Structure probing data (2A3 and DMS) for a 177-nucleotide construct. The RNA was probed in 150 mM KOAc, 10 mM MgCl2 and 150 mM bicine (pH 8.5) at 24 C. For DMS, 24,430 sequencing reads were counted. For 2A3 the reverse transcriptase was SuperScript II with manganese. Source: RMDB library M2PK50, as collected in RNAgym.

RNA sequence: GGGAACGACUCGAGUAGAGUCGAAAACUAGUGCCAUUCGUGGCACUAGAAGGGGUCGAGCCUGGAAAGGCUGGAGGUAUUGGAAUGGUCGGGCCGCCAUUCAAGGUACGCUAUUCGUAGCGUACAAGAUCGGUAUGUAAUUCGUUACAUACCGAUCAAAAGAAACAACAACAACAAC
Reactivity to 2A3 in 0.01 (KOAc 150mM, MgCl2 10mM, bicine 150mM(pH8.5), 24C), signal-to-noise 9, nucleotides 027 to 126: c000u000a000g000u000g000c000c000a020u040u040c250g100u060g000g000c000a000c000u000a000g000a010a020g040g020g000g010u050c050g050a010g000c000c010u040g120g080a180a130a020g020g000c010u030g040g020a050g020g040u170a200u180u300g130g010a010a010u000g000g000u020c020g010g010g000c000c000g000c000c000a000u000u010c010a000a020g180g000u000a000c000g000c000u000a020u030u100c200g100u040a000g000c000g000u000a000c000a000a010
Reactivity to DMS in 0.01 (KOAc 150mM, MgCl2 10mM, bicine 150mM(pH8.5), 24C), signal-to-noise 8, nucleotides 027 to 126: c010u000a000g010u000g000c000c000a050u000u010c200g030u000g010g010c000a010c000u000a000g010a100a080g000g000g000g010u000c050g000a020g010c000c000u000g010g040a120a140a020g000g010c010u000g020g030a040g000g000u010a120u010u010g010g010a020a010u000g000g000u000c030g000g000g010c020c030g000c000c000a010u000u000c010a140a100g010g010u000a000c000g010c000u000a020u000u010c180g010u000a000g010c000g010u000a000c000a090a090
DMS adducts were read by reverse transcription with MarathonRT.